[RMDB]
RNA sequence: GGGAACGACUCGAGUAGAGUCGAAAAUCUUAGUCGCCGGCAUCAACUAACAUGAAAAAUAAUAACGUACCAUUAUAUCUAUGGUUACUUUGGUGUACGUUUUGCCUGUACAUCACUACCCCGUGGCGAUCCAAUAGGUAUUCGUACCUAUUGGAUCAAAAGAAACAACAACAACAAC
Reactivity to 2A3 in 0.01 (KOAc 150mM, MgCl2 10mM, bicine 150mM(pH8.5), 24C), signal-to-noise 9, nucleotides 027 to 126: u010c000u030u040a030g040u030c040g010c040c010g040g010c010a030u040c020a040a090c030u090a040a030c030a090u120g130a100a050a050a030a040u220a060a060u110a080a030c050g000u010a010c010c010a010u060u070a140u080a050u160c100u050a040u050g050g000u040u070a020c010u050u050u060g010g000u020g010u010a020c030g030u040u040u110u150g060c000c020u010g000u010a010c010a020u040c000a010c050u090a070c000c010c010c010g060u050g060g020c040
Reactivity to DMS in 0.01 (KOAc 150mM, MgCl2 10mM, bicine 150mM(pH8.5), 24C), signal-to-noise 8, nucleotides 027 to 126: u010c030u000u010a090g020u000c060g010c030c020g010g010c030a050u000c050a050a080c080u000a080a080c120a070u000g000a020a070a080a090a080u010a080a060u010a050a070c140g010u000a040c020c010a030u000u000a080u010a090u010c160u010a040u000g000g010u000u010a030c050u000u000u000g010g020u000g010u000a010c030g000u000u010u000u010g010c120c070u000g020u000a020c030a010u000c010a040c180u000a140c040c010c000c050g010u000g010g030c210